[RMDB]
RNA sequence: GGGAACGACUCGAGUAGAGUCGAAAAUGCACGGUCAAAAACAUAUUGAUUAAUGACGUCGCUGGCCCCGCGUGUUUCCACUUUCAGCAACGCCGAGGCAGGAACAACGUUACGACCGCUUCCUGCAUGAAAAUCGAUUAUUCGUAAUCGAUUUUCAAAAAGAAACAACAACAACAAC
Reactivity to 2A3 in 0.01 (KOAc 150mM, MgCl2 10mM, bicine 150mM(pH8.5), 24C), signal-to-noise 4, nucleotides 027 to 126: u120g020c040a000c060g060g060u040c020a020a020a060a110a030c080a100u270a150u150u250g100a110u110u190a090a040u110g030a010c020g000u020c050g000c070u030g080g030c000c000c010c000g030c020g020u030g010u020u060u030c050c010a080c060u110u190u120c060a030g000c020a050a040c040g010c020c040g030a040g070g000c020a010g000g030a040a010c050a000a020c050g030u060u080a060c140g030a030c010c030g000c030u000u010c010c000u010g000c010a030
Reactivity to DMS in 0.01 (KOAc 150mM, MgCl2 10mM, bicine 150mM(pH8.5), 24C), signal-to-noise 2, nucleotides 027 to 126: u000g010c080a080c050g010g020u010c020a020a080a110a070a080c110a120u000a150u000u010g000a120u000u000a090a170u010g000a050c040g010u000c100g010c030u010g010g020c030c010c010c080g010c110g030u000g010u010u000u010c040c070a110c140u010u010u000c100a060g000c070a050a060c070g030c040c040g010a090g000g010c010a020g000g010a040a060c050a060a080c120g000u000u000a090c290g000a050c100c020g010c090u000u000c000c000u000g010c070a150